[RMDB]
RNA sequence: GGGAACGACUCGAGUAGAGUCGAAAAUGACAGCGCGUGAUCAUGCUCGUACGUACCAGCGCUCUCGACGUACUGGCCUGGCCCACUGCAGUACCGUGCGUCAUCACGUACUCAGCGCUGAGUACGACAAGAGAACGAUAUUCGUAUCGUUCUCUUGAAAAGAAACAACAACAACAAC
Reactivity to DMS in 0.01 (KOAc 150mM, MgCl2 10mM, bicine 150mM(pH8.5), 24C), signal-to-noise 9, nucleotides 027 to 126: u000g000a070c070a070g010c050g020c040g010u000g010a100u000c080a060u000g010c040u000c110g010u000a110c030g020u000a040c050c020a040g000c020g010c010u000c110u010c120g010a060c080g020u000a020c020u000g020g010c300c040u000g000g000c040c020c050a080c090u000g020c050a030g000u000a070c050c080g010u000g010c090g000u000c070a080u010c110a080c070g010u000a050c070u000c100a050g010c040g010c040u000g000a090g010u000a010c010g010a220
Reactivity to 2A3 in 0.01 (KOAc 150mM, MgCl2 10mM, bicine 150mM(pH8.5), 24C), signal-to-noise 9, nucleotides 027 to 126: u130g040a030c040a040g020c040g010c030g110u070g040a110u080c050a050u110g040c020u030c070g090u120a120c010g000u000a020c010c010a010g000c010g000c010u030c020u050c080g040a040c050g000u020a010c010u080g040g020c010c010u030g030g020c030c050c020a070c060u110g000c040a030g030u070a130c010c030g000u010g000c010g050u020c010a040u180c030a010c070g040u060a030c040u050c080a010g010c020g010c050u010g010a010g030u000a000c010g010a020

This 177-nucleotide RNA was probed chemically with DMS and 2A3. As a SHAPE reagent, 2A3 marks flexible, mostly unpaired nucleotides at the ribose 2'-OH. In probing experiments dimethyl sulfate is read out at A N1 and C N3, which are open when not base-paired. 2A3 adducts were read by reverse transcription with SuperScript II with manganese.